[RMDB]
RNA sequence: GGGAACGACUCGAGUAGAGUCGAAAAGCCGCGGCAAGUGGAGUUAGCGAGAAGAGAGUAGGCUUUGGUUUCUUCAAGUGAAGCGGUCACCAAUCAGGUGUGGUAGUUACCGUAAAAAAUCCGGAUUAAUGCCUCAGCGCGUUCGCGCGCUGAGGAAGACUGUACUCUCGUUCGCGAGAGUACAGUCAAAAGAAACAACAACAACAAC
Reactivity to 2A3 in 0.01 (KOAc 150mM, MgCl2 10mM, bicine 150mM(pH8.5), 24C), signal-to-noise 2, nucleotides 027 to 156: g000c010c020g010c010g030g000c040a070a090g080u020g060g040a040g030u130u140a010g030c060g020a040g030a170a020g040a060g020a030g060u130a070g070g020c040u040u040u030g030g000u030u090u000c040u070u050c070a050a090g040u040g070a050a010g030c000g000g000u090c030a020c020c020a020a110u140c070a050g040g040u020g010u030g100g030u040a050g010u000u090a040c000c000g040u110a040a040a030a040a040a020u050c030c010g010g010a040u160u160a180a030u200g010c000c000u000c000a000g000c000g010c010g010u020u080c160g000c000g010c000g000c180u020g000a000g000g000a000a000

Chemical mapping of a 207-nucleotide RNA with 2A3.
The RNA was probed in 150 mM KOAc, 10 mM MgCl2 and 150 mM bicine (pH 8.5) at 24 C.
Reactivities are given for positions 27 through 156.
2A3 is a SHAPE reagent: it acylates the 2'-hydroxyl of flexible nucleotides of all four kinds.
It was measured as part of the RMDB library M2RFPK.